The record gives the reactivity of an RNA of 177 nucleotides to DMS. Source: RMDB library OK2TRN, as collected in RNAgym. The RNA was probed in 150 mM KOAc, 10 mM MgCl2 and 150 mM bicine (pH 8.5) at 24 C. High DMS reactivity at an A or C suggests that its Watson-Crick edge is free.
RNA sequence: GGGAACGACUCGAGUAGAGUCGAAAAAUGGGGUAAGGCUCCCAGUAGACGACUGGGUUGAUAGGCCGGAUCUGGAAGCCAGGUAACUGGUGGAGGUGACCGGUACUAAUAGGCCGAGGGCUUGUCCGAGUUGAAUCGCAUUCGUGCGAUUCAACUCAAAAGAAACAACAACAACAAC
Reactivity to DMS in 0.01 (KOAc 150mM, MgCl2 10mM, bicine 150mM(pH8.5), 24C), signal-to-noise 1, nucleotides 027 to 126: a070u000g000g000g000g000u010a130a120g000g000c010u060c000c010c000a010g000u000a130g000a300c240g000a150c000u000g000g020g000u000u000g010a080u000a010g000g010c040c000g000g000a300u000c010u000g000g010a300a150g010c000c000a000g010g000u000a070a030c000u020g000g000u000g040g010a290g000g040u000g000a080c110c000g010g010u000a010c020u000a010a050u000a080g030g000c090c020g000a160g010g000g020c130u010u000g010u010c120c070